RNA sequence: GGGAACGACUCGAGUAGAGUCGAAAAAAUUUAACUGAGGGCGUAAGUUCUCAGCACUCAUCAAGAAGUAGGCUUAGGCCAAUUGCUUGGUGGUGAAAGUAGAGGGAAGGUAGCACUUCGACGCCUCCCUUCCAGGGACUUUCGAGUCCCUGGAAGGAAAAGAAACAACAACAACAAC
Reactivity to DMS in 0.01 (KOAc 150mM, MgCl2 10mM, bicine 150mM(pH8.5), 24C), signal-to-noise 1, nucleotides 027 to 126: a040a020u080u050u080a130a240c000u000g030a010g000g000g000c010g000u050a090a060g000u000u000c000u000c000a030g000c020a010c010u060c000a000u000c040a030a000g000a000a070g000u010a170g000g010c050u020u020a150g000g060c000c000a000a080u160u000g020c000u010u000g000g020u000g000g010u000g000a060a020a060g000u000a040g000a070g000g000g000a010a000g010g030u000a100g000c140a100c090u000u020c100g000a050c130g020c000c030u000c060
Reactivity to 2A3 in 0.01 (KOAc 150mM, MgCl2 10mM, bicine 150mM(pH8.5), 24C), signal-to-noise 2, nucleotides 027 to 126: a000a000u160u130u090a000a010c000u000g000a010g020g020g000c070g040u120a180a000g000u020u000c000u000c030a000g030c000a000c000u180c000a000u000c000a000a030g000a150a050g060u100a090g010g000c000u000u030a080g070g070c000c030a050a120u040u000g000c000u010u000g000g000u000g010g000u000g070a010a010a010g010u070a020g010a000g020g150g000a040a060g120g020u020a020g050c070a040c080u050u000c030g130a010c010g040c010c030u060c030